About this RNA
This 170-nucleotide RNA was probed chemically with 2A3 and DMS. The 2A3 profile rests on 101,607 reads. 2A3 adducts were read by reverse transcription with SuperScript II with manganese. The data come from the RNA Mapping Database (RMDB), library 15KLIB. DMS adducts were read by reverse transcription with MarathonRT.
RNA sequence: GGGAACGACUCGAGUAGAGUCGAAAAGUUCACCCACUGCUCGAGGACGUCUUCCCUUCCCCCGCGAUUCUUCUUCGACUCGGCCCGGCUCAUUUCGGCAAAGGGCGGCGGUCCUUAGUUCUCUUACCUACGAUAGUGUUCGCACUAUCGAAAAGAAACAACAACAACAAC
Reactivity to 2A3 in 0.01 (KOAc 150mM, MgCl2 10mM, bicine 150mM(pH8.5), 24C), signal-to-noise 9, nucleotides 027 to 129: g050u090u080c040a100c010c010c020a050c010u010g010c000u000c000g000a020g020g090a270c010g040u020c110u030u050c000c000c000u010u030c020c000c000c010c000g020c030g020a060u060u010c010u060u010c000u040u050c030g050a070c020u000c020g040g020c010c020c000g030g000c020u030c080a120u050u160u120c050g010g000c020a110a090a100g030g000g010c010g010g010c040g020g010u010c000c010u040u080a020g010u060u010c010u000c000u060u080a140c010c040u040a060
Reactivity to DMS in 0.01 (KOAc 150mM, MgCl2 10mM, bicine 150mM(pH8.5), 24C), signal-to-noise 9, nucleotides 027 to 129: g010u040u030c060a130c020c050c060a190c050u000g020c000u020c000g000a040g060g000a210c040g000u040c130u020u010c000c000c000u000u020c020c020c010c010c040g010c070g000a080u000u000c000u000u000c070u000u010c000g020a050c050u010c000g010g010c000c050c020g040g000c060u000c070a100u010u020u000c080g010g010c050a050a090a070g030g020g030c050g010g050c030g020g010u030c010c030u010u010a040g010u020u000c010u020c020u030u010a100c070c050u020a110